The record gives the reactivity of an RNA of 207 nucleotides to DMS and 2A3. The 2A3 profile rests on 3,190 reads. The reactions ran in a buffer of 150 mM KOAc, 10 mM MgCl2 and 150 mM bicine (pH 8.5), at 24 C. The DMS profile rests on 3,677 reads.
[RMDB]
RNA sequence: GGGAACGACUCGAGUAGAGUCGAAAACUGCAGGUCAACGGACGUUCUUCAGAUCAGCUAUUGCAGAAGAAAGGUCAGCCAAGCGCUCUGGGCCGUGUCGACUGUAUAUAGGAGCUUCUGAUUUCAACCAGAAGCUAACUCUCUCCGAAACAAUGAGGCUGAUUUAAUGAUUCGUCAUUAAAUCAGCAAAAGAAACAACAACAACAAC
Reactivity to DMS in 0.01 (KOAc 150mM, MgCl2 10mM, bicine 150mM(pH8.5), 24C), signal-to-noise 2, nucleotides 027 to 156: c050u020g010c020a060g040g000u010c040a150a130c060g000g010a110c050g020u010u000c040u000u000c080a110g010a130u000c020a120g020c060u000a110u010u000g000c050a170g000a070a140g010a070a080a080g030g020u000c000a050g000c030c080a090a120g040c090g030c050u020c030u000g030g000g040c020c030g000u000g050u000c030g000a180c000u020g000u010a070u010a080u000a140g000g030a080g010c000u000u010c010u010g010a040u010u000u010c090a070a060c010c000a010g000a020a010g020c000u010a010a020c040u010c030u000c000u000c030c030g020a150a070a100c040a030a100u000g020a180g040
Reactivity to 2A3 in 0.01 (KOAc 150mM, MgCl2 10mM, bicine 150mM(pH8.5), 24C), signal-to-noise 5, nucleotides 027 to 156: c030u050g000c020a020g010g050u060c020a040a030c060g050g040a010c030g050u050u030c020u050u030c030a020g010a170u050c030a030g010c030u080a110u200u160g010c030a020g010a120a000g060a060a110a010g040g020u070c030a010g000c010c050a100a020g030c030g020c060u010c040u030g030g020g000c010c010g020u040g050u070c050g010a040c000u010g030u040a060u010a010u060a160g120g000a010g000c000u000u000c000u000g070a130u180u270u200c030a070a060c020c000a010g000a010a000g000c000u000a020a020c000u000c010u030c000u000c010c030g100a080a070a070c060a070a160u170g010a040g160